[RMDB]
RNA sequence: GGGAACGACUCGAGUAGAGUCGAAAAGAUAUGGAGUACGCCUUGAUGACCUUAAGCUAGCUCGGAAACGAGCUAGGUCACAGCAAGAGGUCGUACUCCUAAGUCAAAAGCAGACUUCGGUCUGCAAGUUGAGAUGAUUCUUCGGAAUCAUCUCAACAAAAGAAACAACAACAACAAC
Reactivity to DMS in 0.01 (KOAc 150mM, MgCl2 10mM, bicine 150mM(pH8.5), 24C), signal-to-noise 3, nucleotides 027 to 126: g000a030u010a220u000g010g020a010g050u000a000c000g010c020c000u000u000g010a190u000g020a100c140c070u020u020a090a230g030c080u010a030g030c010u000c000g000g000a080a050a070c010g000a000g000c000u010a000g000g000u000c040a060c300a170g030c210a090a120g000a020g010g000u000c040g010u000a000c000u000c000c000u010a010a050g000u000c040a070a070a100a120g030c000a010g010a030c000u000u010c180g010g000u000c000u000g030c010a000a020
Reactivity to 2A3 in 0.01 (KOAc 150mM, MgCl2 10mM, bicine 150mM(pH8.5), 24C), signal-to-noise 4, nucleotides 027 to 126: g020a010u050a020u080g000g010a010g000u010a000c010g020c020c010u190u130g130a300u190g050a180c030c030u100u180a120a010g160c060u060a030g000c010u040c010g020g000a030a020a020c010g010a010g000c010u000a000g000g020u030c020a040c070a090g300c090a210a120g000a000g050g030u230c090g000u000a000c010u000c010c000u000a010a000g000u000c000a000a040a060a070g000c000a010g000a010c000u090u160c300g120g010u000c000u000g000c010a000a000

Record summary:
Chemical mapping of a 177-nucleotide RNA with DMS and 2A3. For DMS, 2,143 sequencing reads were counted. Values cover nucleotides 27 to 126.